The record gives the reactivity of an RNA of 177 nucleotides to DMS and 2A3. The 2A3 profile rests on 469 reads. Conditions: 150 mM KOAc, 10 mM MgCl2 and 150 mM bicine (pH 8.5), 24 C.

[RMDB]
RNA sequence: GGGAACGACUCGAGUAGAGUCGAAAAGACGAUCACACUAAUAUCAGGAAGGCUUUCUGUUGUGAUUACAGGACAUCCAGGAGGUUUAAGUGGAAAGUACGUAGACGGCCAGACGUACUCAAAGGAACGAUCAGUGGUACUUCGGUACCACUGAUCGAAAAGAAACAACAACAACAAC
Reactivity to DMS in 0.01 (KOAc 150mM, MgCl2 10mM, bicine 150mM(pH8.5), 24C), signal-to-noise 1, nucleotides 027 to 126: g000a040c140g030a060u030c020a040c030a120c100u010a050a040u060a090u040c070a010g010g000a070a010g000g000c120u010u000u020c060u000g000u010u020g000u110g000a100u000u030a090c090a040g050g030a030c030a020u000c010c000a050g010g020a000g000g000u000u060u020a000a090g070u000g000g000a100a070a010g000u000a010c020g000u000a090g000a090c240g000g070c000c000a170g000a040c010g000u000a000c000u040c050a030a100a120g030g020a050a050
Reactivity to 2A3 in 0.01 (KOAc 150mM, MgCl2 10mM, bicine 150mM(pH8.5), 24C), signal-to-noise 1, nucleotides 027 to 126: g000a020c040g000a000u000c030a000c000a000c000u160a000a120u050a140u130c110a000g010g010a190a000g000g000c060u110u040u010c000u040g110u220u000g090u000g150a130u000u030a040c060a060g000g000a000c000a000u010c000c000a100g000g000a000g020g070u100u020u120a070a100g000u060g010g000a050a000a000g000u000a000c000g000u000a000g050a290c030g140g000c010c000a000g040a100c000g000u030a000c000u000c160a060a120a000g090g000a080a080